RNA sequence: GGGAACGACUCGAGUAGAGUCGAAAAUUGUUAUCUUAAUGCAGUUAUUAUGACACUUGAUUUAUUGAAGGACAUUAAAUUUGUUAUACCUGCUCUACAGCAUGCAUUUAUGAAACAUAAGGGCGGUCACCAGUAGAGUUCGCUCUACUGAAAAGAAACAACAACAACAAC
Reactivity to DMS in 0.01 (KOAc 150mM, MgCl2 10mM, bicine 150mM(pH8.5), 24C), signal-to-noise 9, nucleotides 027 to 129: u030u000g020u010u020a070u010c000u000u000a030a050u010g000c010a020g010u010u030a100u010u010a020u010g020a020c050a060c300u000u000g030a060u020u010u010a030u020u010g030a150a080g000g000a120c010a050u000u000a020a030a040u020u000u020g020u000u000a030u010a040c230c070u030g030c050u000c170u040a040c140a010g000c040a060u000g020c000a000u000u010u020a050u020g020a010a000a000c020a000u020a050a060g000g000g050c060g010g000u010c050a060c090
Reactivity to 2A3 in 0.01 (KOAc 150mM, MgCl2 10mM, bicine 150mM(pH8.5), 24C), signal-to-noise 9, nucleotides 027 to 129: u060u020g030u030u020a210u140c020u020u060a020a010u040g000c000a010g070u070u100a140u110u040a040u080g030a010c020a020c080u080u130g070a050u120u060u110a080u070u100g090a120a050g110g030a020c010a020u030u070a030a040a050u090u080u040g030u030u020a030u020a050c010c030u040g030c020u000c050u070a050c050a030g010c020a040u040g000c010a020u020u050u070a110u160g070a070a040a010c020a020u070a030a030g020g020g010c040g000g020u020c010a030c050
Structure probing data (DMS and 2A3) for a 170-nucleotide construct.
The RNA was probed in 150 mM KOAc, 10 mM MgCl2 and 150 mM bicine (pH 8.5) at 24 C.
For DMS the reverse transcriptase was MarathonRT.
The data come from the RNA Mapping Database (RMDB), library 15KLIB.